[RMDB]
RNA sequence: GGGAACGACUCGAGUAGAGUCGAAAAAGCAGGUUAACAAGCAUUAAUACUAAAUGUGUUUCAUCGUCUACUUAUUGCUAAACAAAUUGAUUGUUCAUCAAAUUUGCAAUUCGUUAGUUGGGUUAAAGAUACAUUCCAUGUUCGCAUGGAAUGUAUCAAAAGAAACAACAACAACAAC
Reactivity to 2A3 in 0.01 (KOAc 150mM, MgCl2 10mM, bicine 150mM(pH8.5), 24C), signal-to-noise 5, nucleotides 027 to 126: a010g080c060a020g030g060u120u080a060a030c070a050a040g010c010a030u080u140a110a070u110a200c110u100a040a100a090u130g030u010g020u010u010u030c040a070u060c030g070u020c000u010a020c010u030u010a010u020u030g000c060u090a080a050a070c050a050a120a070u030u020g020a010u050u130g060u220u070c020a020u010c010a030a070a100u040u040u030g000c010a010a010u020u010c030g030u050u030a050g000u040u070g060g000g030u040u090a060a040a000
Reactivity to DMS in 0.01 (KOAc 150mM, MgCl2 10mM, bicine 150mM(pH8.5), 24C), signal-to-noise 4, nucleotides 027 to 126: a070g020c090a040g010g000u000u010a060a050c080a110a110g000c050a050u000u010a040a080u000a150c120u000a090a080a030u000g030u010g010u010u000u000c060a070u000c060g000u000c010u000a020c010u000u000a010u000u000g000c070u020a030a050a070c140a040a040a110u000u000g010a040u000u010g010u020u000c130a060u000c050a010a040a130u000u000u000g000c010a020a040u000u000c040g010u000u000a040g010u000u010g010g000g010u000u010a030a060a100